[RMDB]
RNA sequence: GGGAACGACUCGAGUAGAGUCGAAAAGUCAGGCACGGUGCUCAAUCGUGUAGCGUUUGAGCGACGCUUUACUGACUUCAAGGAUGAAGGACGCGUCGCCGCCACCCUAGAGGCGGCAUCCCCCGCGUCGGCCUAUAUACUUCGGUAUAUAGGCCGAAAAAGAAACAACAACAACAAC
Reactivity to 2A3 in 0.01 (KOAc 150mM, MgCl2 10mM, bicine 150mM(pH8.5), 24C), signal-to-noise 9, nucleotides 027 to 126: g000u010c000a000g000g020c040a000c020g030g010u070g000c090u120c230a060a010u010c000g030u070g070u110a030g060c010g000u000u020u110g100a050g020c040g030a010c010g000c010u040u050u100a060c000u010g010a010c000u010u010c030a050a030g090g020a070u160g090a090a080g090g010a010c010g030c000g030u070c080g000c000c000g000c010c000a120c050c020c030u130a110g040a060g090g000c000g000g000c000a010u010c000c000c000c010c000g000c000g020
Reactivity to DMS in 0.01 (KOAc 150mM, MgCl2 10mM, bicine 150mM(pH8.5), 24C), signal-to-noise 8, nucleotides 027 to 126: g000u000c000a010g000g010c190a060c010g000g000u000g010c120u040c140a060a010u000c000g010u010g020u020a090g010c010g000u000u000u000g010a080g020c110g000a020c010g000c080u010u020u010a140c000u000g010a020c010u000u000c090a120a100g010g010a110u020g000a140a090g010g000a040c020g000c010g000u020c120g000c000c010g000c000c010a050c080c110c100u020a100g010a060g000g010c000g000g010c020a060u010c010c010c010c170c020g000c060g000